The data come from the RNA Mapping Database (RMDB), library TTRDEL.
An RNA of 177 nucleotides, treated with 2A3 and DMS and read out base by base.
The DMS profile rests on 5,365 reads.
2A3 is a SHAPE reagent: it acylates the 2'-hydroxyl of flexible nucleotides of all four kinds.
For DMS the reverse transcriptase was MarathonRT.
For 2A3, 6,859 sequencing reads were counted.
The RNA was probed in 150 mM KOAc, 10 mM MgCl2 and 150 mM bicine (pH 8.5) at 24 C.
RNA sequence: GGGAACGACUCGAGUAGAGUCGAAAAGAUAUGGAGAAUCAGCCGAUAAGACGAUGGUCGGAAACGACCAUUCGUCUUUUGACGGCUGACUCCUAAGUCAAAACCAAAAAUGUUCGCAUUUUUGGAACGGAGUAUAUGUGUUCGCACAUAUACUCCGAAAAGAAACAACAACAACAAC
Reactivity to 2A3 in 0.01 (KOAc 150mM, MgCl2 10mM, bicine 150mM(pH8.5), 24C), signal-to-noise 3, nucleotides 027 to 126: g020a010u060a030u100g000g010a010g030a140a300u040c000a000g030c000c010g060a080u040a160a060g000a020c000g010a000u010g000g000u010c010g010g010a090a040a020c000g000a000c010c010a020u030u010c000g020u000c020u000u010u000u010g010a010c000g000g010c010u000g000a000c000u000c000c010u020a100a020g020u000c030a030a030a150a230c010c000a010a000a010a000a000u050g020u110u130c290g020c180a010u020u000u000u000u010g040g000a070a070
Reactivity to DMS in 0.01 (KOAc 150mM, MgCl2 10mM, bicine 150mM(pH8.5), 24C), signal-to-noise 5, nucleotides 027 to 126: g010a030u000a300u000g000g000a010g010a170a120u000c010a020g040c000c000g010a150u000a010a010g010a000c000g010a020u000g010g010u000c000g010g000a060a080a180c010g010a010c000c000a010u010u010c000g010u000c000u000u000u010u000g020a190c140g000g000c010u000g010a000c000u010c000c000u010a030a090g000u000c030a070a070a150a210c000c000a000a000a000a020a010u000g010u010u010c250g010c010a010u000u000u000u000u000g000g010a090a150